An RNA of 207 nucleotides, treated with DMS and 2A3 and read out base by base. Source: RMDB library M2RFPK, as collected in RNAgym. Reactivities are given for positions 27 through 156.

RNA sequence: GGGAACGACUCGAGUAGAGUCGAAAAGAAACGCAAGGCCGCUGACCGACGGGAUAUUGUGGUGCUUACCACAGGGGACGCGGCGUUAUCACUUGCCUUUUAAGCCGACCGUCUGGGCUGCAUACAAACCACCCAACUAUCUUCGGAUAGUUGGGAACUAUUAUAUCUUGUUCGCAAGAUAUAAUAGAAAAGAAACAACAACAACAAC
Reactivity to DMS in 0.01 (KOAc 150mM, MgCl2 10mM, bicine 150mM(pH8.5), 24C), signal-to-noise 3, nucleotides 027 to 156: g010a060a090a070c050g010c030a070a080g030g000c030c010g000c040u010g010a230c030c010g030a210c060g020g000g010a130u010a060u000u010g030u000g010g030u000g030c180u010u010a080c020c010a020c010a090g000g000g000g000a240c130g010c010g010g000c030g070u000u000a090u000c090a210c030u000u000g010c020c040u020u000u000u000a050a110g020c030c040g020a080c030c030g010u010c050u010g000g030g030c030u000g000c050a120u010a130c070a030a070a120c010c050a100c010c000c000a000a010c000u000a010u010c020u000u010c300g030g020a010u000a010g020u000u000g000g000g000a010a010
Reactivity to 2A3 in 0.01 (KOAc 150mM, MgCl2 10mM, bicine 150mM(pH8.5), 24C), signal-to-noise 5, nucleotides 027 to 156: g020a010a050a010c120g000c020a000a010g130g000c000c000g030c020u050g070a040c010c020g040a040c030g050g050g060a110u110a100u190u090g010u010g010g000u060g110c120u130u200a020c000c020a000c000a030g000g000g000g040a000c030g010c030g010g020c000g010u030u030a020u030c030a000c100u020u010g020c000c000u030u140u040u120a060a020g010c000c010g050a080c010c010g020u020c010u080g070g030g000c000u020g040c020a070u090a130c050a020a060a030c050c030a040c010c010c000a000a000c000u010a000u000c000u020u040c150g070g010a000u000a000g000u000u000g010g000g000a000a000